[RMDB]
RNA sequence: GGGAACGACUCGAGUAGAGUCGAAAACAUUUCAAUCAAGCGAGGAGUAACAAAAGCAGAACCAUUAACAUUCGGAGCUGUUCACCAGUGGUAAUGACGGGGAAACUCGCUCAGAAACUGGAAAUUACCAAAAAGAGACAAGUGUGUGGAGAGGUGGGAUGACUAAUAUCUUCGGAUAUUAGUCAUCAAAAGAAACAACAACAACAAC
Reactivity to DMS in 0.01 (KOAc 150mM, MgCl2 10mM, bicine 150mM(pH8.5), 24C), signal-to-noise 3, nucleotides 027 to 156: c070a120u010u000u010c060a120a120u020c050a050a140g030c020g020a060g020g000a140g010u010a060a130c040a030a090a080a150g050c030a100g010a080a140c040c020a100u000u000a020a040c060a100u000u000c050g020g010a090g040c020u000g000u000u000c070a110c000c040a060g000u000g010g030u000a070a080u020g010a060c030g000g000g020g010a110a080a140c020u000c030g020c030u000c050a100g030a030a100a070c050u000g000g000a040a070a100u010u000a090c050c050a060a050a070a070a110g030a080g010a070c060a030a060g030u000g000u000g030u010g000g010a130g020a040g020g040u000g010g020
Reactivity to 2A3 in 0.01 (KOAc 150mM, MgCl2 10mM, bicine 150mM(pH8.5), 24C), signal-to-noise 7, nucleotides 027 to 156: c010a030u100u160u160c110a090a090u030c030a060a010g050c010g040a010g030g000a040g060u110a080a090c080a110a120a030a000g050c040a020g030a070a030c030c020a050u100u120a060a080c050a070u100u140c070g020g020a030g020c030u020g040u080u050c050a050c040c000a020g010u030g060g020u130a180a070u060g010a010c010g000g000g000g000a010a020a020c010u010c020g040c050u000c000a020g020a030a080a010c020u020g000g000a040a050a090u120u080a060c010c030a060a070a010a010a010g050a010g020a040c020a060a060g030u030g000u000g020u030g080g010a020g000a010g030g040u040g030g070

Structure probing data (DMS and 2A3) for a 207-nucleotide construct. For 2A3 the reverse transcriptase was SuperScript II with manganese. DMS adducts were read by reverse transcription with MarathonRT. The reactions ran in a buffer of 150 mM KOAc, 10 mM MgCl2 and 150 mM bicine (pH 8.5), at 24 C. It was measured as part of the RMDB library OK3TST. The DMS profile rests on 4,242 reads.